[RMDB]
RNA sequence: GGGAACGACUCGAGUAGAGUCGAAAAUACGCUGGUAGCAGCAAGUAGCAGCUCUAUCCGCAGAUGAGCGGAAUAUACAUAUGAAAAUGGAUCUCGAUAGAGGUGCUACAAUCGAGACCAUUAGAGAACCUACCAGGUGAUUCGUCACCUGGUAGGUAAAAGAAACAACAACAACAAC
Reactivity to 2A3 in 0.01 (KOAc 150mM, MgCl2 10mM, bicine 150mM(pH8.5), 24C), signal-to-noise 5, nucleotides 027 to 126: u190a020c020g000c020u030g030g060u170a110g130c050a010g000c010a060a060g020u020a010g010c000a000g040c010u010c040u030a030u010c010c020g000c040a020g130a300u170g030a080g100c020g000g040a000a000u140a000u020a020c110a010u270a090u300g140a070a050a050a000u020g010g110a150u010c000u000c000g010a000u040a050g080a010g020g130u040g010c010u040a050c070a060a060u010c010g010a000g000a010c010c020a000u020u070a040g080a020g020a040
Reactivity to DMS in 0.01 (KOAc 150mM, MgCl2 10mM, bicine 150mM(pH8.5), 24C), signal-to-noise 3, nucleotides 027 to 126: u060a120c150g040c000u000g020g000u030a110g010c030a060g020c060a110a200g000u000a030g000c000a030g000c010u000c020u000a150u000c000c010g000c050a140g010a140u110g000a190g010c020g010g010a050a060u020a040u040a080c270a080u020a060u030g000a090a090a040a030u000g000g000a110u000c000u000c000g000a000u040a020g030a030g000g000u000g000c010u000a060c010a090a070u000c030g000a030g000a010c000c000a030u000u000a120g000a170g000a070
Conditions: 150 mM KOAc, 10 mM MgCl2 and 150 mM bicine (pH 8.5), 24 C. An RNA of 177 nucleotides, treated with 2A3 and DMS and read out base by base. For 2A3 the reverse transcriptase was SuperScript II with manganese. Values are in units of 0.01, from 0 to 300, in steps of 10. Reactivities are given for positions 27 through 126. The DMS profile rests on 3,909 reads. The data come from the RNA Mapping Database (RMDB), library OK1LIB. The 2A3 profile rests on 4,642 reads.